[RMDB]
RNA sequence: GGGAACGACUCGAGUAGAGUCGAAAAUUAGAGACUUGAAUGAAAUGGGAUGUAGCAACUUGGAUCAAUGUACACGGUCACCAGGUUCUACUUUGUGACAUUGAUUAAAUGCUGAUAAAUUGAAGUACUCAUUAUAGUGAUUCGUCACUAUAAUGAGAAAAGAAACAACAACAACAAC
Reactivity to DMS in 0.01 (KOAc 150mM, MgCl2 10mM, bicine 150mM(pH8.5), 24C), signal-to-noise 8, nucleotides 027 to 126: u020u020a060g000a120g010a060c060u010u010g000a060a060u010g000a050a080a050u010g010g000g020a090u010g000u010a020g020c070a030a050c130u010u010g020g000a020u010c020a020a030u010g010u020a070c050a030c080g000g000u000c110a110c100c090a060g000g010u010u020c110u020a040c030u010u010u020g010u010g000a050c010a010u000u010g000a040u010u000a050a050a070u020g000c010u000g000a070u030a030a070a100u020u010g000a050a090g000u010a140
Reactivity to 2A3 in 0.01 (KOAc 150mM, MgCl2 10mM, bicine 150mM(pH8.5), 24C), signal-to-noise 9, nucleotides 027 to 126: u190u110a030g030a010g020a090c070u080u110g080a070a030u070g050a060a120a090u130g040g060g050a050u110g050u080a010g000c030a020a080c060u040u070g090g000a010u030c020a020a040u050g040u100a090c050a030c080g070g020u050c020a040c080c060a040g060g000u070u090c020u050a060c000u050u050u150g030u010g020a010c010a020u010u010g010a010u040u050a060a070a050u080g010c020u020g020a090u130a110a140a070u120u120g050a070a020g030u040a050